[RMDB]
About this RNA
An RNA of 177 nucleotides, treated with 2A3 and read out base by base. For 2A3 the reverse transcriptase was SuperScript II with manganese. The reactions ran in a buffer of 150 mM KOAc, 10 mM MgCl2 and 150 mM bicine (pH 8.5), at 24 C. The 2A3 profile rests on 1,286 reads.
RNA sequence: GGGAACGACUCGAGUAGAGUCGAAAACCCACGACUUUCGAGUCGUGGGAAAAAUAAUCAGCGGUAAAUAAUUAGCUCCGCUUACCGCUGAAGCGGAGCAUACACGUCUAGGAUUCGUCCUAGACAAGUGUGACAGUAGGUUCGCCUACUGUCACACAAAAGAAACAACAACAACAAC
Reactivity to 2A3 in 0.01 (KOAc 150mM, MgCl2 10mM, bicine 150mM(pH8.5), 24C), signal-to-noise 1, nucleotides 027 to 126: c000c000c000a000c000g010a000c000u120u100u110c200g090a000g020u000c000g000u000g000g010g010a070a010a000a000a010u140a020a010u000c010a000g050c000g200g280u270a030a020a090u100a070a110u150u120a060g000c000u000c000c000g010c010u000u020a130c030c000g000c000u000g000a000a000g000c000g010g020a000g000c000a000u070a040c090a000c060g020u000c000u000a000g010g020a010u060u000c210g030u000c020c000u010a000g000a000c020a000a000